[RMDB]
RNA sequence: GGGAACGACUCGAGUAGAGUCGAAAAAGACGCGCGCCAGUUGCGCCAGUGGAAGUAGCUCUCUCUGAACCGGCCAAGUCGACCAAACUAAUACGAGAGACCUUUUCCGUAUCCAUGGUUGUCUCCGUGUCGUGGCGCUUUUGUGUCACUGUAAGGGCCUCUGAUACUGUUUCGACAGUAUCAGAGGAAAAGAAACAACAACAACAAC
Reactivity to DMS in 0.01 (KOAc 150mM, MgCl2 10mM, bicine 150mM(pH8.5), 24C), signal-to-noise 1, nucleotides 027 to 156: a070g060a020c010g020c010g000c050g030c110c080a220g020u000u000g030c000g020c020c010a070g030u040g010g010a050a050g000u000a040g010c090u000c020u000c050u000c010u000g030a080a120c200c030g000g040c020c020a100a140g030u000c050g000a100c030c030a050a120a110c050u000a070a120u000a080c130g050a120g030a220g010a030c070c050u000u050u000u000c000c040g040u010a080u000c030c030a110u020g020g000u000u000g000u010c000u030c000c050g020u020g000u000c100g010u000g030g010c050g000c020u060u000u000u010g030u000g000u000c010a030c030u020g000u000a090a100g000g010g000
Reactivity to 2A3 in 0.01 (KOAc 150mM, MgCl2 10mM, bicine 150mM(pH8.5), 24C), signal-to-noise 2, nucleotides 027 to 156: a000g090a040c060g080c010g010c020g020c050c110a080g030u130u090g030c000g010c000c010a050g000u120g050g030a010a090g060u040a030g040c010u030c000u010c000u000c040u110g040a120a060c060c040g000g000c040c040a110a050g140u130c110g050a140c050c000a180a110a020c070u140a050a110u080a080c040g000a000g000a000g010a120c020c040u070u020u020u000c000c030g040u070a150u040c080c040a070u040g060g000u050u140g060u030c020u010c030c020g070u060g060u110c050g010u010g050g000c000g000c000u030u100u010u220g020u000g020u020c020a030c000u070g030u040a000a090g000g050g000